[RMDB]
RNA sequence: GGGAACGACUCGAGUAGAGUCGAAAAUCGUCGAAGUGAUGGCUGCGCUGAUGCUCGUGGCGCUUGCCGCGAUGCUGACCGCGCCGACGCUCGCCGGCGCUCGAAUGCGCGAUCGAGUGGACGCGCAGGCACUAAUGCGGUUCGCCGCAUUAGUGCCAAAAGAAACAACAACAACAAC
Reactivity to 2A3 in 0.01 (KOAc 150mM, MgCl2 10mM, bicine 150mM(pH8.5), 24C), signal-to-noise 2, nucleotides 027 to 126: u090c000g030u000c010g030a110a070g050u040g090a140u100g080g000c040u050g030c170g020c040u070g010a030u040g020c000u000c000g070u020g020g000c050g000c170u050u300g000c000c000g000c010g010a030u240g020c000u020g020a030c000c000g010c000g010c000c000g000a000c000g000c020u030c030g080c070c040g030g000c000g000c010u000c040g170a240a050u100g020c000g020c030g020a140u080c010g040a040g050u130g060g050a020c000g000c010g000c000a030
Reactivity to DMS in 0.01 (KOAc 150mM, MgCl2 10mM, bicine 150mM(pH8.5), 24C), signal-to-noise 2, nucleotides 027 to 126: u010c010g020u000c050g010a140a110g020u000g000a110u020g010g030c000u000g040c000g010c020u010g000a170u000g020c000u000c000g030u010g000g010c000g030c300u010u030g020c030c040g010c050g010a060u000g030c030u000g010a220c290c110g000c010g020c000c020g000a070c040g000c040u010c080g040c140c030g010g020c010g040c020u010c070g010a060a120u010g020c010g010c010g020a050u000c040g010a070g010u000g000g030a220c140g020c010g010c040a070